[RMDB]
RNA sequence: GGGAACGACUCGAGUAGAGUCGAAAAGCAUCUUGCUUCGGCAAGAUGCAAAUAACGGUCAGUGCUUGCAGCUAGUCGUAAAUGCUAACUGGGCUUACGCUAAAACGAAUGCGUUCGCGCAUUCGAAGUUGCCAAUAUAGUUCGCUAUAUUGGCAACAAAAGAAACAACAACAACAAC
Reactivity to DMS in 0.01 (KOAc 150mM, MgCl2 10mM, bicine 150mM(pH8.5), 24C), signal-to-noise 5, nucleotides 027 to 126: g010c010a000u000c000u000u000g000c000u000u010c210g040g000c010a010a010g010a010u000g010c000a010a040a040u010a090a090c070g020g010u010c090a090g010u000g000c020u010u010g030c030a030g040c040u010a020g020u000c070g010u000a070a080a130u010g000c020u000a030a060c040u000g010g000g010c020u010u000a060c130g010c050u000a050a060a100a150c020g010a010a000u000g000c010g030u000u000c200g030c010g010c000a010u000u000c000g000a020a070
Reactivity to 2A3 in 0.01 (KOAc 150mM, MgCl2 10mM, bicine 150mM(pH8.5), 24C), signal-to-noise 6, nucleotides 027 to 126: g000c000a000u000c000u000u000g000c010u040u050c130g070g000c000a000a000g000a000u000g000c000a000a000a000u030a030a010c040g020g070u060c040a040g030u030g100c040u080u170g080c000a020g000c030u050a020g030u100c050g070u070a060a100a070u170g000c010u030a080a110c050u060g000g030g030c000u030u060a040c060g010c080u100a020a030a030a110c020g010a000a000u000g020c020g010u020u040c250g000c000g000c050a010u010u000c000g000a030a020
Chemical mapping of a 177-nucleotide RNA with DMS and 2A3. The DMS profile rests on 6,643 reads. Values cover nucleotides 27 to 126. 2A3 adducts were read by reverse transcription with SuperScript II with manganese. The data come from the RNA Mapping Database (RMDB), library M2PK50. For DMS the reverse transcriptase was MarathonRT.